Record summary
The record gives the reactivity of an RNA of 177 nucleotides to DMS and 2A3. The RNA was probed in 150 mM KOAc, 10 mM MgCl2 and 150 mM bicine (pH 8.5) at 24 C. The 2A3 profile rests on 33,059 reads.
RNA sequence: GGGAACGACUCGAGUAGAGUCGAAAAUGAUUGAGCGUAGCUCACACUCAGACUGUACGACAGUCUGACACACACCUACGCUAGUGCAUCGUGUGUGUGAUAUCGAUGUAGCACGAAAAUGAAGUAAACGAAUAGGGUAAUUCGUUACCCUAUUCGUAAAAGAAACAACAACAACAAC
Reactivity to DMS in 0.01 (KOAc 150mM, MgCl2 10mM, bicine 150mM(pH8.5), 24C), signal-to-noise 9, nucleotides 027 to 126: u000g010a120u000u010g000a130g010c010g020u000a040g010c080u000c040a030c060a040c070u000c010a010g000a020c000u000g010u010a160c300g010a150c020a010g010u000c010u000g000a020c090a070c170a070c160a190c060c040u000a010c020g010c030u010a070g020u000g000c020a050u000c030g010u000g010u000g010u000g000u000g010a050u000a040u000c030g000a040u000g010u000a060g020c030a110c110g010a050a060a070a090u010g010a090a100g010u010a070a090
Reactivity to 2A3 in 0.01 (KOAc 150mM, MgCl2 10mM, bicine 150mM(pH8.5), 24C), signal-to-noise 9, nucleotides 027 to 126: u290g040a110u150u230g060a040g030c020g020u030a000g000c000u010c010a010c000a000c000u010c000a000g000a010c010u020g030u170a140c150g160a070c250a000g000u000c000u000g000a000c000a000c000a000c000a010c020c010u040a010c020g040c090u060a070g050u010g020c000a010u020c020g010u000g000u000g000u000g000u010g040a020u010a020u060c020g010a010u020g040u090a040g140c050a020c100g070a090a060a020a050u220g060a110a050g110u200a140a150